[RMDB]
RNA sequence: GGGAACGACUCGAGUAGAGUCGAAAACGUAGCUAAACCCUACGAGCUUCCCAGUCCGUCCGGCUCGUCUGCUGGCUGGUUUUUCGGACUGUCAUCGUAAGCGGACUCGCCACGUUCAGCAGGUCUCUGGCUGACGGGUUAAAACUUGUGGGAAUCGGAGUGGAGAAAAGUUCGCUUUUCUCCACUCAAAAGAAACAACAACAACAAC
Reactivity to 2A3 in 0.01 (KOAc 150mM, MgCl2 10mM, bicine 150mM(pH8.5), 24C), signal-to-noise 2, nucleotides 027 to 156: c010g000u000a000g000c080u060a010a050a110c020c000c000u000a000c000g000a000g110c080u010u000c000c000c000a000g010u010c000c010g020u010c010c000g030g000c000u020c040g000u010c000u020g060c010u000g010g000c000u020g000g010u030u020u020u190u250c000g020g000a010c020u020g220u160c180a270u110c090g210u140a030a000g000c000g020g000a020c000u000c020g010c000c000a290c080g010u180u120c010a000g000c010a000g040g020u020c000u020c010u020g000g000c000u000g010a000c000g000g000g000u000u000a000a010a040a100c040u060u150g000u010g000g010g000a030a000u070c080g090